[RMDB]
RNA sequence: GGGAACGACUCGAGUAGAGUCGAAAAGCAGGAGUGUUCGCACUCCUGCAAAUGAAAGCGGCCAGCUCCAGGCCGCGAAACAAUAUGGAGCACAAAGUAAAGAAAGGCCUACGUUCGCGUAGGCCAACUAGUGGUAAUACUUCGGUAUUACCACUAGAAAAGAAACAACAACAACAAC
Reactivity to DMS in 0.01 (KOAc 150mM, MgCl2 10mM, bicine 150mM(pH8.5), 24C), signal-to-noise 2, nucleotides 027 to 126: g020c000a020g000g010a000g010u010g020u000u020c140g030c000a000c000u000c000c000u000g010c010a020a000a040u010g000a120a160a150g010c010g010g010c010c000a110g000c000u010c000c000a000g000g000c010c000g020c020g000a040a050a050c150a030a030u030a120u000g010g000a000g000c000a160c230a040a050a130g030u000a060a080a080g000a070a090a140g010g000c000c000u000a000c000g000u000u030c230g020c020g020u000a020g000g000c000c000a000a030
Reactivity to 2A3 in 0.01 (KOAc 150mM, MgCl2 10mM, bicine 150mM(pH8.5), 24C), signal-to-noise 3, nucleotides 027 to 126: g000c000a000g010g010a000g000u010g020u050u160c160g060c080a000c010u000c000c010u000g010c000a000a000a000u100g000a000a070a010g000c000g010g000c000c030a040g020c000u010c000c000a010g010g010c000c000g010c010g000a010a020a000c090a000a000u020a050u070g000g000a010g200c000a000c010a020a060a010g100u260a090a070a030g090a060a160a040g000g000c010c000u010a000c010g020u050u080c160g000c010g110u000a000g000g010c000c000a000a000
This 177-nucleotide RNA was probed chemically with DMS and 2A3. 2A3 adducts were read by reverse transcription with SuperScript II with manganese. The RNA was probed in 150 mM KOAc, 10 mM MgCl2 and 150 mM bicine (pH 8.5) at 24 C.